Source information:
The record gives the reactivity of an RNA of 177 nucleotides to DMS. For DMS the reverse transcriptase was MarathonRT. The reactions ran in a buffer of 150 mM KOAc, 10 mM MgCl2 and 150 mM bicine (pH 8.5), at 24 C. Source: RMDB library TTRINS, as collected in RNAgym.

RNA sequence: GGGAACGACUCGAGUAGAGUCGAAAAGAUAUGGAGCGACCGCUUGAUGACCGAUACACAGGGAACUGUACAUCGGAAACGAUGUACUAAGUACCUGUGUAUCGCAAGAGCUGUCGCUCCUAAGUCACAUAGGAUCCUACUUCGGUAGGAUCCUAUGAAAAGAAACAACAACAACAAC
Reactivity to DMS in 0.01 (KOAc 150mM, MgCl2 10mM, bicine 150mM(pH8.5), 24C), signal-to-noise 2, nucleotides 027 to 126: g010a080u000a300u000g000g010a020g050c000g030a010c010c160g010c000u020u000g030a130u020g000a130c300c000g010a020u000a000c000a000c040a000g000g000g000a120a130c300u000g010u000a000c000a000u000c000g030g000a030a140a150c000g020a020u000g000u000a010c000u000a000a030g010u000a110c000c000u000g010u030g000u000a000u000c000g010c040a030a150g000a000g020c000u000g020u000c010g010c010u030c000c000u010a000a030g000u000c030a210